[RMDB]
RNA sequence: GGGAACGACUCGAGUAGAGUCGAAAAACGCCUACUACGGUAGGCGAACCACCUUAAGGCCGCGCUCGCCAGCCUCGGCGGGGCGGCUCCCGCCGCCGCAACCAAUGAGAUAGCAUACGUGCUAUCAGAGUACAGAGUUCUUCGGAACUCUGUACUCAAAAGAAACAACAACAACAAC
Reactivity to 2A3 in 0.01 (KOAc 150mM, MgCl2 10mM, bicine 150mM(pH8.5), 24C), signal-to-noise 2, nucleotides 027 to 126: a000c000g010c000c000u010a010c000u020a020c240g140g010u000a000g000g020c000g000a000a000c010c020a070c020c020u080u220a040a080g030g020c000c010g010c030g150c090u030c060g000c020c020a040g070c120c050u090c040g010g000c000g020g000g000g000c040g020g000c000u010c000c000c030g040c040c020g000c010c060g000c030a000a080c020c010a070a140u260g000a080g000a290u000a020g000c030a000u000a090c220g110u050g010c000u000a000u020c030a000